About this RNA
Chemical mapping of a 207-nucleotide RNA with 2A3 and DMS. The DMS profile rests on 2,869 reads.
RNA sequence: GGGAACGACUCGAGUAGAGUCGAAAAGAGCUCUAGAUGCGAUUGUAGACUGUUACAGCAUCUGCUAUCAGUCUGAGAUAGCUCAGGAUAGCAGGAGCUAUCUGCAACGGUGCAGACUCCUGUGACACCGUGAACAAUCGUUCAUGUCACAGAGCAGCGUAGUGACUGCAUUCGUGCAGUCACUACGAAAAGAAACAACAACAACAAC
Reactivity to 2A3 in 0.01 (KOAc 150mM, MgCl2 10mM, bicine 150mM(pH8.5), 24C), signal-to-noise 3, nucleotides 027 to 156: g040a020g000c000u020c010u020a060g020a100u030g000c000g020a020u000u030g030u020a030g030a110c020u010g020u060u050a040c030a010g010c020a090u060c020u080g000c030u080a010u060c020a060g110u000c060u060g000a000g020a030u050a070g040c000u010c020a030g060g090a180u150a130g100c140a100g140g000a000g000c020u010a010u000c000u060g060c030a050a040c090g120g000u030g000c000a000g020a100c040u090c020c020u050g010u020g010a000c000a020c010c070g030u020g090a030a000c010a010a030u020c020g040u080u090c060a090u170g060u120c010a030c040a110g000a010g000c030a000g010
Reactivity to DMS in 0.01 (KOAc 150mM, MgCl2 10mM, bicine 150mM(pH8.5), 24C), signal-to-noise 2, nucleotides 027 to 156: g000a110g010c000u000c010u010a070g020a090u000g020c000g000a080u010u010g020u000a100g030a160c000u020g010u000u020a030c010a160g040c240a130u010c040u000g010c000u000a010u000c030a070g000u000c040u030g040a040g020a090u000a050g000c020u000c030a140g010g020a250u000a250g040c130a080g030g010a090g000c000u000a020u000c000u010g010c050a100a030c090g000g020u000g050c020a150g000a090c010u040c040c040u000g010u000g010a070c030a020c100c100g000u030g000a100a060c020a020a060u000c050g000u000u000c050a090u000g010u000c040a110c060a040g020a080g000c000a080g000